[RMDB]
RNA sequence: GGGAACGACUCGAGUAGAGUCGAAAAGGCUCGUGAGCUUUCCUAGUCGUCGAACUGUAUCCGAUACUAAACAAUUGUCGAGCUGCAAGUCAUCCGGCUGCCCGAAUUACUCAGGCACCCCAGAGUAUCCCGUAGGGUAUUUCGAUACCCUACGGGAAAAAGAAACAACAACAACAAC
Reactivity to DMS in 0.01 (KOAc 150mM, MgCl2 10mM, bicine 150mM(pH8.5), 24C), signal-to-noise 3, nucleotides 027 to 126: g010g010c010u000c050g020u000g010a030g010c030u000u010u000c000c000u000a030g020u000c050g010u000c080g000a050a070c040u010g020u010a180u000c060c020g000a120u000a050c150u010a060a090a070c180a070a060u020u000g010u010c040g010a090g020c020u000g020c040a060a070g020u000c080a070u000c060c040g020g020c040u000g010c020c020c030g000a090a110u020u010a110c110u010c030a080g010g000c030a190c070c000c020c040a170g010a110g010u010a090
Reactivity to 2A3 in 0.01 (KOAc 150mM, MgCl2 10mM, bicine 150mM(pH8.5), 24C), signal-to-noise 1, nucleotides 027 to 126: g010g010c020u000c000g120u130g060a030g010c000u070u040u000c020c000u000a030g050u030c060g000u000c050g030a110a040c020u090g030u040a030u040c020c040g000a030u020a080c020u090a090a120a080c020a070a120u110u130g030u040c030g030a050g000c000u030g000c050a130a050g000u030c010a030u080c060c000g070g010c020u010g010c000c000c040g060a040a070u040u000a020c040u010c040a010g000g000c030a040c000c050c000c040a020g000a000g290u250a050